This 170-nucleotide RNA was probed chemically with 2A3 and DMS. The DMS profile rests on 4,689 reads. For 2A3 the reverse transcriptase was SuperScript II with manganese. Reactivities are rounded to 0.1 and cut off at 0 and 3. The reactions ran in a buffer of 150 mM KOAc, 10 mM MgCl2 and 150 mM bicine (pH 8.5), at 24 C. For DMS the reverse transcriptase was MarathonRT.
RNA sequence: GGGAACGACUCGAGUAGAGUCGAAAAUUUCUUUUAAUGAAUGGGCUCUUGCCAACCAAUUCACUGAAUUUGUUGGCACUCAAUCCGUUGACAUGUUAGCUGUCAAAACAGGCGUUGCUAUUGAACAAAGGUUGCCUCUUCGGAGGCAACAAAAGAAACAACAACAACAAC
Reactivity to 2A3 in 0.01 (KOAc 150mM, MgCl2 10mM, bicine 150mM(pH8.5), 24C), signal-to-noise 1, nucleotides 027 to 129: u000u000u000c000u000u150u010u080a170a010u200g110a100a000u040g000g000g000c020u020c100u170u010g000c000c000a000a000c000c000a020a030u010u000c070a200c300u270g000a010a060u000u000u000g000u000u000g000g000c000a000c000u040c000a040a040u020c100c000g000u000u090g000a000c010a020u060g060u090u000a000g000c010u060g000u010c080a100a000a000a000c000a050g030g000c000g290u120u000g000c010u260a120u070u110g070a040a010c010a000a080a010g090
Reactivity to DMS in 0.01 (KOAc 150mM, MgCl2 10mM, bicine 150mM(pH8.5), 24C), signal-to-noise 2, nucleotides 027 to 129: u040u040u040c010u000u040u050u030a040a120u070g000a020a080u040g000g000g000c030u000c080u000u000g050c000c040a000a000c050c030a040a040u020u000c060a190c280u060g000a000a090u020u000u000g090u000u010g000g060c040a050c140u010c270a070a000u010c010c050g050u030u030g000a040c090a040u060g000u000u000a030g020c160u000g080u040c020a040a050a040a100c010a070g090g000c150g000u030u030g000c070u020a060u000u000g040a010a200c120a040a070a020g010